RNA sequence: GGGAACGACUCGAGUAGAGUCGAAAAUAAUAGUUCUUGUUAGUGGCAAAAAUUAGGGGAAAGAAGUACAUCAAUAAUUUACUUAUUCAAUAAAUACUUGUUGAAUGCCAAGUAUAAUGCCAUGUGCUUAAAACACAAUGGUGAACAAGGACUCAGAUAGCAUAUACCCUUUCGAGGGUAUAUGCUAAAAAGAAACAACAACAACAAC
Reactivity to 2A3 in 0.01 (KOAc 150mM, MgCl2 10mM, bicine 150mM(pH8.5), 24C), signal-to-noise 1, nucleotides 027 to 156: u100a000a070u060a010g000u000u010c000u000u000g060u050u100a050g010u050g040g000c020a000a040a000a230a230u190u130a090g000g000g040g000a020a040a080g100a040a070g030u010a070c040a130u110c070a150a240u140a240a130u090u090u050a040c000u050u110a030u240u020c000a000a000u130a300a070a050u090a200c100u090u030g040u010u000g070a100a000u120g040c040c000a000a010g000u000a080u000a140a090u060g040c040c000a010u060g000u000g000c060u060u150a040a220a080a000c030a010c000a000a270u030g000g060u030g020a000a000c000a000a000g010g020a000c000u000c030a040g030a240
The record gives the reactivity of an RNA of 207 nucleotides to 2A3.
It was measured as part of the RMDB library OK3TST.
Values are in units of 0.01, from 0 to 300, in steps of 10.
2A3 adducts were read by reverse transcription with SuperScript II with manganese.